[RMDB]
RNA sequence: GGGAACGACUCGAGUAGAGUCGAAAAAGUGCUUGCGGAAAAAGCAGUAAUAAAGAUGAAGGAGUAAAAGAUGCUACUAAAACGGAAACCUCAAAACAUAAAGGUGGUACCUUAAAUGUAGCAUUAACAUACCCGAAAACUUCGGUUUUCGGGUAUGAAAAGAAACAACAACAACAAC
Reactivity to DMS in 0.01 (KOAc 150mM, MgCl2 10mM, bicine 150mM(pH8.5), 24C), signal-to-noise 4, nucleotides 027 to 126: a050g020u000g010c020u000u010g010c110g010g010a080a040a030a080a040g000c000a010g000u020a040a070u040a050a150a120g020a070u030g020a070a140g000g010a220g000u000a050a050a060a130g010a010u010g000c000u000a000c000u010a070a070a100a090c210g000g010a110a120a040c000c000u000c100a080a030a160a160c260a150u010a120a100a060g000g020u000g010g030u020a080c040c020u010u010a020a100a100u020g000u000a000g000c010a000u000u020a090a100
Reactivity to 2A3 in 0.01 (KOAc 150mM, MgCl2 10mM, bicine 150mM(pH8.5), 24C), signal-to-noise 4, nucleotides 027 to 126: a000g110u050g010c000u050u040g020c030g140g020a030a050a090a110a000g000c040a000g090u060a040a160u120a090a110a040g060a070u180g090a120a100g100g050a100g090u150a020a060a080a040g040a010u010g020c000u000a010c010u030a010a080a010a080c130g030g010a040a090a030c000c020u090c050a060a100a130a080c130a110u280a110a140a050g060g000u040g020g030u070a100c020c000u040u080a030a130a050u100g000u000a000g000c000a000u010u010a030a000
Source: RMDB library OK1LIB, as collected in RNAgym.
Chemical mapping of a 177-nucleotide RNA with DMS and 2A3.
The reactions ran in a buffer of 150 mM KOAc, 10 mM MgCl2 and 150 mM bicine (pH 8.5), at 24 C.
DMS (dimethyl sulfate) methylates the pairing face of unpaired adenines and cytosines.
The DMS profile rests on 5,811 reads.